[RMDB]
RNA sequence: GGGAACGACUCGAGUAGAGUCGAAAAUGGGAAUGGCAUGGAUGCAAGAAGACGAUGUAUUCGCGUUUUCGAUACAGUCUUGGGAGAAAGUGCGUAAUCUGCUAGAGGACAUCACCGUUCCAACUAACAUAAAUCCUCGAUUCGUCGAGGAUUUAUGAAAAGAAACAACAACAACAAC
Reactivity to 2A3 in 0.01 (KOAc 150mM, MgCl2 10mM, bicine 150mM(pH8.5), 24C), signal-to-noise 5, nucleotides 027 to 126: u110g070g030g030a020a030u020g070g010c080a060u080g120g080a040u060g050c040a070a060g120a080a020g070a120c030g040a030u040g060u090a070u050u110c040g000c010g080u020u030u020u040c010g000a010u010a100c020a020g080u050c080u120u070g020g050g010a110g050a040a050a000g040u060g030c020g020u040a030a050u020c030u050g000c000u040a060g010a040g050g040a050c010a070u060c010a040c010c020g010u010u000c010c000a020a040c040u070a020a020
Reactivity to DMS in 0.01 (KOAc 150mM, MgCl2 10mM, bicine 150mM(pH8.5), 24C), signal-to-noise 7, nucleotides 027 to 126: u000g000g000g010a020a020u000g020g030c170a100u000g000g000a090u000g000c110a110a190g010a110a080g010a060c050g000a060u000g010u000a120u000u010c020g010c060g010u000u000u000u000c000g010a160u010a100c070a090g010u000c090u010u010g000g020g010a220g010a050a040a070g010u010g010c090g010u000a070a080u000c020u010g020c030u000a090g000a100g010g000a120c100a050u000c090a100c130c030g010u000u000c000c000a060a080c150u010a070a220
The record gives the reactivity of an RNA of 177 nucleotides to 2A3 and DMS.
The DMS profile rests on 7,289 reads.
Conditions: 150 mM KOAc, 10 mM MgCl2 and 150 mM bicine (pH 8.5), 24 C.
For DMS the reverse transcriptase was MarathonRT.
2A3 adducts were read by reverse transcription with SuperScript II with manganese.